[RMDB]
RNA sequence: GGGAACGACUCGAGUAGAGUCGAAAAAAUGCAUUCUAUUCACUGUGCCAUCUGUUUUUCUAUAGGUGAUCAGAGGGGAAAAGAAGCGCUAGAUAGACACCCACGCUCAUGAGCGUACCUCAUACUGUGAAUUGUGGAUAUUCGUAUCCACAAUUCAAAAAGAAACAACAACAACAAC
Reactivity to DMS in 0.01 (KOAc 150mM, MgCl2 10mM, bicine 150mM(pH8.5), 24C), signal-to-noise 5, nucleotides 027 to 126: a050a060u030g000c020a130u010u000c020u000a100u010u000c000a070c020u000g000u000g000c280c020a020u000c000u010g000u010u020u040u020u040c160u030a050u000a030g000g030u000g000a110u020c040a030g000a040g010g000g020g000a060a020a090a060g000a020a040g010c100g020c050u000a070g010a120u010a060g000a120c180a120c010c020c050a140c090g000c070u020c090a080u010g000a040g010c030g010u010a070c100c020u000c060a040u040a080c160u030g040
Reactivity to 2A3 in 0.01 (KOAc 150mM, MgCl2 10mM, bicine 150mM(pH8.5), 24C), signal-to-noise 2, nucleotides 027 to 126: a010a010u150g000c030a100u040u000c020u040a060u010u030c030a030c040u050g010u040g180c000c000a020u020c010u010g100u070u070u020u060u000c050u080a090u030a060g000g040u020g030a050u090c020a010g030a040g100g080g000g010a010a080a000a030g020a010a010g020c010g000c110u000a010g030a180u060a040g050a030c010a060c040c040c010a030c020g000c000u030c040a080u130g080a010g020c020g010u060a080c000c020u060c030a050u110a200c060u100g030
Annotation
The record gives the reactivity of an RNA of 177 nucleotides to DMS and 2A3. The RNA was probed in 150 mM KOAc, 10 mM MgCl2 and 150 mM bicine (pH 8.5) at 24 C. For DMS the reverse transcriptase was MarathonRT. In probing experiments dimethyl sulfate is read out at A N1 and C N3, which are open when not base-paired. 2A3 adducts were read by reverse transcription with SuperScript II with manganese.